[RMDB]
RNA sequence: GGGAACGACUCGAGUAGAGUCGAAAACAAUGAAAAUAGAUGGCGAGUGCCUGAUCGAAUUGAUCGGGUCAUGUAGGAACAAGGUUCAAGUCUACCGGUCUGUUAGGAUGCCUCAGCUGCAUACAUCCUAUGAUUUGCAGUUCGCUGCAAAUCAUAGAAAAGAAACAACAACAACAAC
Reactivity to 2A3 in 0.01 (KOAc 150mM, MgCl2 10mM, bicine 150mM(pH8.5), 24C), signal-to-noise 3, nucleotides 027 to 126: c010a000a150u190g110a060a070a060a070u120a020g080a070u050g020g030c060g040a060g050u110g040c010c010u010g000a020u000c020g120a160a300u260u240g000a010u010c000g010g000g000u060c010a020u070g030u050a040g050g060a020a030c040a160a060g090g040u080u090c080a080a030g030u010c010u030a050c040c000g030g040u050c010u080g040u050u080a050g020g070a040u040g000c010c000u050c070a040g000c030u030g020c010a050u060a110c020a060u070c020
Reactivity to DMS in 0.01 (KOAc 150mM, MgCl2 10mM, bicine 150mM(pH8.5), 24C), signal-to-noise 3, nucleotides 027 to 126: c060a100a050u020g000a070a060a100a100u000a070g010a030u010g000g000c020g010a110g020u000g010c010c030u000g000a000u000c010g010a150a110u020u010g010a010u000c010g020g010g000u000c070a030u000g010u010a070g000g000a070a090c080a070a100g030g010u000u000c060a100a110g010u000c040u000a080c050c020g000g000u010c040u010g000u000u000a040g010g000a040u000g010c060c060u010c080a050g010c070u000g020c050a050u000a080c110a110u000c050